[RMDB]
RNA sequence: GGGAACGACUCGAGUAGAGUCGAAAACUUUUUUAAUUGAAUCAUCUACUAAACCUUUACCAGUUAAAUGUAUGACUUGGUAUUGGUGUAAUAAUGCUUCUAGGUUUUCACGAAUAGCAUCAUUUAAUUCCGUUAGUAAUUUCGAUUACUAACGGAAAAAAGAAACAACAACAACAAC
Reactivity to 2A3 in 0.01 (KOAc 150mM, MgCl2 10mM, bicine 150mM(pH8.5), 24C), signal-to-noise 4, nucleotides 027 to 126: c030u110u070u090u060u100u250a160a140u170u100g020a000a030u020c000a010u030c010u070a050c020u040a150a000a040c000c000u020u010u000a010c000c000a000g000u010u060a120a220a170u190g100u300a170u250g040a000c010u080u170g000g000u000a000u000u000g000g000u010g000u000a000a000u040a030a000u010g010c020u000u000c020u050a050g090g010u020u010u010u060c060a060c030g040a060a090u060a080g030c030a030u060c000a020u050u140u120a060a080
Reactivity to DMS in 0.01 (KOAc 150mM, MgCl2 10mM, bicine 150mM(pH8.5), 24C), signal-to-noise 5, nucleotides 027 to 126: c010u000u020u020u040u020u020a060a160u020u010g000a040a020u010c010a010u000c130u010a040c050u000a080a150a020c000c000u000u010u000a000c010c000a010g010u000u000a040a090a150u040g030u020a090u030g000a010c010u010u010g020g000u000a000u000u000g000g010u000g000u010a100a070u010a030a020u000g000c090u000u000c020u010a060g010g010u000u000u000u000c040a110c100g000a070a070u030a070g000c090a060u010c050a070u010u010u010a090a150